[RMDB]
RNA sequence: GGGAACGACUCGAGUAGAGUCGAAAACUCGGGGUGUCUUUUUUAGCCGCCGAUGUGAGGAUCGAAAAUCAUUAUCUCGAAAGGGUAAAGGUUGUUAAGAUAGUAUAUACAUAUACAUAUACAUAUAACCUAUCAGGAAUUUCGAUUCCUGAUAGGUAAAAGAAACAACAACAACAAC
Reactivity to 2A3 in 0.01 (KOAc 150mM, MgCl2 10mM, bicine 150mM(pH8.5), 24C), signal-to-noise 3, nucleotides 027 to 126: c010u000c010g030g010g040g000u100g080u070c060u070u230u090u010u010u180a020g010c000c010g100c050c000g000a000u080g070u070g050a050g060g090a030u030c030g040a030a080a120a010u090c050a130u060u090a060u040c050u020c010g060a090a040a030g060g010g060u100a110a030a000g090g020u000u020g010u040u030a070a040g000a080u050a060g070u000a000u000a000u000a040c050a000u280a020u030a080c010a030u070a020u100a020c000a010u120a010u020a150
Reactivity to DMS in 0.01 (KOAc 150mM, MgCl2 10mM, bicine 150mM(pH8.5), 24C), signal-to-noise 2, nucleotides 027 to 126: c050u000c010g000g000g010g050u010g010u000c000u000u010u040u050u020u030a180g000c020c000g000c030c010g010a060u020g000u030g000a060g010g010a080u020c040g010a090a110a080a020u020c100a100u000u000a050u000c020u010c040g020a110a130a160g000g000g010u030a050a070a150g010g010u000u010g000u000u000a030a080g000a120u000a090g000u000a000u020a010u000a120c040a090u070a120u060a070c020a030u000a020u000a000c010a150u020a060u040a070